The record gives the reactivity of an RNA of 207 nucleotides to 2A3.

RNA sequence: GGGAACGACUCGAGUAGAGUCGAAAACGCGAUGGAUACGUCCAUCGCGAAUCCGACCCAGCCGCGGACGUUAAACUGUGGCACGGUUGUGCCUAGGUGCAACCCUGCUACUAAUGGCGGUACCCCUGCCCAAGCUACCGUCUACGGACGGUAGCAACCUAAUACGACCCUUCGGGGUCGUAUUAGGAAAAGAAACAACAACAACAAC
Reactivity to 2A3 in 0.01 (KOAc 150mM, MgCl2 10mM, bicine 150mM(pH8.5), 24C), signal-to-noise 1, nucleotides 027 to 156: c020g000c000g000a000u000g000g000a010u030a040c290g160u040c000c000a000u020c000g000c000g000a000a000u040c000c000g060a180c010c010c050a060g020c000c030g050c030g040g030a090c040g010u010u110a080a270a100c090u060g000u020g000g020c010a030c010g020g010u020u020g000u040g060c060c080u170a240g000g120u000g030c000a000a010c000c000c000u020g000c000u000a000c000u050a080a110u130g080g000c020g010g000u080a100c000c000c000c000u040g040c000c050c050a090a010g000c000u000a000c000c000g000u040c020u000a040c220g060g000a000c000g010g000u000a000g030c000a000a000

The 2A3 profile rests on 679 reads. Values cover nucleotides 27 to 156. The reactions ran in a buffer of 150 mM KOAc, 10 mM MgCl2 and 150 mM bicine (pH 8.5), at 24 C.